[RMDB]
RNA sequence: GGGAACGACUCGAGUAGAGUCGAAAAGAUAUGGAAUAUACCAUGGGAGCCAGUCGGAAACGACUGAGCAUCGAUCAUGAUAUUCCUAAGUCAAAUCCCUGUACAUAGUUCGCUAUGUACAGGGAAACAGGUCUAGAUGGUUCGCCAUCUAGACCUGAAAAGAAACAACAACAACAAC
Reactivity to 2A3 in 0.01 (KOAc 150mM, MgCl2 10mM, bicine 150mM(pH8.5), 24C), signal-to-noise 1, nucleotides 027 to 126: g040a000u050a040u140g020g010a000a000u010a000u010a200c220c030a000u000g060g150g040a010g000c000c010a000g000u020c000g000g020a060a020a060c030g030a030c010u000g010a040g000c010a170u180c020g120a140u140c000a010u020g010a000u000a000u020u000c000c000u000a090a020g050u000c040a070a040a150u020c000c010c000u010g000u000a000c010a010u010a000g020u040u090c220g000c170u020a020u010g020u000a020c010a000g020g000g000a010a000a000
Reactivity to DMS in 0.01 (KOAc 150mM, MgCl2 10mM, bicine 150mM(pH8.5), 24C), signal-to-noise 2, nucleotides 027 to 126: g000a010u000a300u000g000g010a030a000u000a020u000a080c300c060a010u000g010g020g010a040g030c000c000a010g010u000c010g010g000a120a060a200c000g020a030c000u010g000a060g020c000a100u000c160g010a150u020c010a010u010g000a060u010a010u000u000c000c000u000a010a130g010u000c000a040a180a130u000c000c010c010u000g000u020a000c000a030u000a000g000u000u020c190g030c000u000a010u000g000u000a010c000a010g010g000g000a010a000a030